Structure probing data (DMS and 2A3) for a 177-nucleotide construct. It was measured as part of the RMDB library TTRDEL. Conditions: 150 mM KOAc, 10 mM MgCl2 and 150 mM bicine (pH 8.5), 24 C. Reactivities are given for positions 27 through 126. DMS adducts were read by reverse transcription with MarathonRT. The DMS profile rests on 814 reads. 2A3 adducts were read by reverse transcription with SuperScript II with manganese.
RNA sequence: GGGAACGACUCGAGUAGAGUCGAAAAGAUAUGGAGCAGCAGAGCUCGAUGUUCAAUGAUGUCGGAAACGAUUGAGAACUAAGAGCGACGAAGCUGCUCCUAAGUCAAAGUGCUCUUCGGAGCACAACUACACCCACCAGUUCGCUGGUGGGUGUAGAAAAGAAACAACAACAACAAC
Reactivity to DMS in 0.01 (KOAc 150mM, MgCl2 10mM, bicine 150mM(pH8.5), 24C), signal-to-noise 1, nucleotides 027 to 126: g010a060u010a300u010g010g000a010g020c000a020g020c000a100g020a150g010c000u000c020g010a140u000g000u020u000c000a070a170u010g000a100u010g000u000c000g030g000a210a120a140c020g000a000u000u010g000a050g000a000a000c000u020a270a270g000a000g000c000g010a110c240g010a050a070g000c040u000g010c000u000c000c000u000a020a050g020u000c010a040a150a140g000u000g000c010u000c020u000u000c110g010g020a010g020c000a000c010a020a140
Reactivity to 2A3 in 0.01 (KOAc 150mM, MgCl2 10mM, bicine 150mM(pH8.5), 24C), signal-to-noise 1, nucleotides 027 to 126: g000a000u040a060u180g020g010a030g040c010a010g030c020a000g000a020g030c010u000c040g000a080u230g010u050u010c100a210a240u300g090a040u140g020u030c010g040g000a100a040a040c010g000a010u020u100g010a020g000a010a000c030u080a140a000g000a000g010c030g030a010c000g020a040a010g000c000u000g000c020u020c000c000u020a020a000g000u000c000a050a110a020g000u000g000c020u000c020u040u180c300g080g020a010g000c000a000c000a000a000